[RMDB]
RNA sequence: GGGAACGACUCGAGUAGAGUCGAAAACUCGAAUCUUUCGAGAUUCGAGACUCUCGAAGUGUCAAUAAGAUCGAAAAGAUCGCCGAGCAAAAAAUAGACACAAUGCUGCUUGAUUCGUCAAGCAGAAUUGCCGUGUAAUUUUCGAAUUACACGGCAAAAAAGAAACAACAACAACAAC
Reactivity to DMS in 0.01 (KOAc 150mM, MgCl2 10mM, bicine 150mM(pH8.5), 24C), signal-to-noise 1, nucleotides 027 to 126: c010u000c000g000a000a000u010c000u000u020u010c140g020a010g000a030u010u000c010g010a020g020a120c060u000c000u000c010g010a180a080g000u000g000u000c000a080a050u010a060a140g000a010u000c000g010a160a040a080a190g010a000u000c020g030c180c090g040a140g010c100a020a010a080a070a010a070u000a090g000a000c000a010c020a120a100u020g000c030u000g040c020u000u010g020a070u000u020c200g010u000c000a000a000g000c000a000g010a030a100